Source: RMDB library OK2TRN, as collected in RNAgym. Chemical mapping of a 177-nucleotide RNA with DMS and 2A3. Reactivities are rounded to 0.1 and cut off at 0 and 3. The reactions ran in a buffer of 150 mM KOAc, 10 mM MgCl2 and 150 mM bicine (pH 8.5), at 24 C. DMS adducts were read by reverse transcription with MarathonRT. The 2A3 profile rests on 7,471 reads.
RNA sequence: GGGAACGACUCGAGUAGAGUCGAAAAGUAUCUGUAGUGCCUAGAACAAUGCCUCCUAUCAUAGGUGCUCAUUCAGUGUUUGCUGAAUAAAUGAAUGAAUGAAAUAGAGGGUGCCAAAGAGAGCUAACGAUCAUUUAGGAUUCGUCCUAAAUGAUCGAAAAGAAACAACAACAACAAC
Reactivity to DMS in 0.01 (KOAc 150mM, MgCl2 10mM, bicine 150mM(pH8.5), 24C), signal-to-noise 7, nucleotides 027 to 126: g010u000a050u000c040u000g010u000a070g040u000g010c020c010u000a060g000a080a100c130a080a110u010g020c030c010u000c020c020u000a120u000c070a100u000a060g010g030u000g010c040u000c080a040u000u000c010a020g020u000g010u010u000u010g010c070u010g000a060a050u000a040a090a070u000g010a070a070u000g010a050a060u000g010a060a100a100u010a070g010a080g010g000g020u000g010c030c030a040a080a090g010a080g000a080g010c070u000a080a190
Reactivity to 2A3 in 0.01 (KOAc 150mM, MgCl2 10mM, bicine 150mM(pH8.5), 24C), signal-to-noise 6, nucleotides 027 to 126: g010u020a070u070c040u090g090u100a020g010u030g030c020c010u020a030g040a110a030c070a100a100u130g050c010c000u020c020c020u060a060u120c040a050u050a060g000g000u020g010c020u020c010a000u000u020c010a010g020u010g200u250u300u300g000c020u050g050a030a020u070a090a070a020u100g100a060a040u080g050a050a050u070g020a070a090a030u090a030g080a050g010g030g000u020g000c000c010a040a090a000g090a010g000a010g030c030u040a090a010